[RMDB]
RNA sequence: GGGAACGACUCGAGUAGAGUCGAAAAUGAAUCGAGAUAGAGAUAGAAAUAGCAAGGGGUUCUAUUGUAAACGGCCGAAUAGAACCCUGUUCAAGUGGUCCGCCCACUGAUGUCGGGUUUAGGCCAACGAGUAUCACAGUUUCGACUGUGGUAUUCGAAAAGAAACAACAACAACAAC
Reactivity to 2A3 in 0.01 (KOAc 150mM, MgCl2 10mM, bicine 150mM(pH8.5), 24C), signal-to-noise 9, nucleotides 027 to 126: u120g030a010a050u070c050g010a010g030a080u080a050g080a030g020a020u040a050g110a020a080a020u100a030g060c060a040a080g000g000g000g000u000u000c000u000a000u000u030g070u070a050a080a010c050g010g000c010c010g020a010a000u010a010g000a000a000c000c000c000u000g000u020u040c010a010a000g010u000g010g010u000c020c050g020c010c000c000a020c000u040g050a050u100g030u060c040g030g010g000u030u060u090a030g000g000c000c010a000a010
Reactivity to DMS in 0.01 (KOAc 150mM, MgCl2 10mM, bicine 150mM(pH8.5), 24C), signal-to-noise 9, nucleotides 027 to 126: u020g000a070a060u010c040g010a100g010a100u020a060g010a110g000a080u020a060g010a070a070a080u030a100g010c120a100a090g000g000g000g000u000u000c000u000a000u000u000g010u020a050a070a110c180g000g010c010c010g000a020a010u000a010g000a010a000c000c000c000u000g000u010u000c090a070a050g020u010g000g000u020c080c150g000c070c000c010a020c050u010g010a060u020g010u010c080g010g000g010u010u010u010a060g010g000c000c010a050a210